Conditions: 150 mM KOAc, 10 mM MgCl2 and 150 mM bicine (pH 8.5), 24 C. Structure probing data (2A3 and DMS) for a 177-nucleotide construct. Values cover nucleotides 27 to 126.
RNA sequence: GGGAACGACUCGAGUAGAGUCGAAAAAGCUGCCUGGAAUGAGAAGUUUGCCGCUUACGCUAAAGCGUAUCCGGAACUGGCUGCUGAAUUCAAACGCCGUGUCAGCGGUGAGUUGCCAGCCAACUGGCCUACGGCGUACAUUCGUGUACGCCGUAGGAAAAGAAACAACAACAACAAC
Reactivity to 2A3 in 0.01 (KOAc 150mM, MgCl2 10mM, bicine 150mM(pH8.5), 24C), signal-to-noise 1, nucleotides 027 to 126: a000g030c030u040g040c000c010u040g040g140a110a080u120g030a060g030a210a090g030u060u160u190g080c000c000g000c010u010u010a000c030g050c070u210a210a060a020g000c000g000u000a000u050c010c020g030g010a010a020c050u020g000g000c010u020g020c020u050g100a100a130u140u000c060a190a120a010c030g000c020c000g030u050g090u110c040a090g000c020g000g050u000g000a140g060u000u060g120c000c010a000g010c020c000a140a190c040u020g040g060
Reactivity to DMS in 0.01 (KOAc 150mM, MgCl2 10mM, bicine 150mM(pH8.5), 24C), signal-to-noise 2, nucleotides 027 to 126: a070g000c050u000g020c070c030u010g000g020a090a070u010g020a120g010a130a100g000u000u000u000g020c010c000g020c070u000u010a030c020g030c010u000a070a130a120g010c000g000u000a010u010c170c000g020g000a110a180c080u000g010g000c000u000g020c040u010g000a060a070u000u000c100a040a090a170c080g020c030c010g020u010g060u000c100a030g010c040g000g020u000g010a050g030u000u000g000c050c040a030g000c130c060a050a110c080u000g020g000